[RMDB]
RNA sequence: GGGAACGACUCGAGUAGAGUCGAAAAUUUACGUGUCAGAUAAAAGGCGGCAUAGCCCAUCACCAUGGCGGCCAUCAGGCGCGGUCGCCAGUAGCGGUAACGCGCAUUCACCUGUUCCGGCGUCAAACAACCGUCCGAAAUUCGUUUCGGACGGUUGAAAAGAAACAACAACAACAAC
Reactivity to DMS in 0.01 (KOAc 150mM, MgCl2 10mM, bicine 150mM(pH8.5), 24C), signal-to-noise 1, nucleotides 027 to 126: u020u010u010a050c090g030u000g020u000c040a060g020a130u060a070a000a040a200g060g000c080g010g010c150a070u020a140g100c000c020c010a100u010c070a030c130c080a060u000g010g010c030g010g000c000c000a030u000c090a110g020g020c030g030c020g000g030u000c020g000c020c010a010g000u000a070g000c010g010g020u020a070a180c160g010c010g000c000a090u000u010c110a030c030c020u010g000u000u000c030c080g050g000c050g000u010c150a040a100a190

Background:
The record gives the reactivity of an RNA of 177 nucleotides to DMS. The RNA was probed in 150 mM KOAc, 10 mM MgCl2 and 150 mM bicine (pH 8.5) at 24 C. For DMS the reverse transcriptase was MarathonRT. DMS (dimethyl sulfate) methylates the pairing face of unpaired adenines and cytosines.